Structure probing data (2A3) for a 177-nucleotide construct. The 2A3 profile rests on 551 reads. High 2A3 reactivity points to a flexible backbone, as in loops and unpaired stretches. The data come from the RNA Mapping Database (RMDB), library OK1LIB.

[RMDB]
RNA sequence: GGGAACGACUCGAGUAGAGUCGAAAAAUCGGUAACGAUGAUCUUACCUUCGUUUUUGCUGUUAGCCGGAGCCAUUUCAGCAGCAAUUGGCAUGACAAUACCGCUUCUAUCAACCAUUACAGCUAAAGCGUCAGCAUCCUUUCGAGGAUGCUGACGCAAAAGAAACAACAACAACAAC
Reactivity to 2A3 in 0.01 (KOAc 150mM, MgCl2 10mM, bicine 150mM(pH8.5), 24C), signal-to-noise 2, nucleotides 027 to 126: a000u060c000g020g010u010a020a000c000g010a000u110g040a030u120c030u050u180a180c010c000u020u040c000g020u000u000u000u160u000g000c070u040g080u060u080a010g010c030c000g010g000a060g100c040c030a030u000u050u100c060a160g020c000a000g010c000a000a160u010u060g040g000c020a020u120g060a030c000a120a100u130a070c000c000g090c040u150u020c000u030a170u150c040a160a180c010c010a170u060u060a040c060a000g080c000u060a030a040a040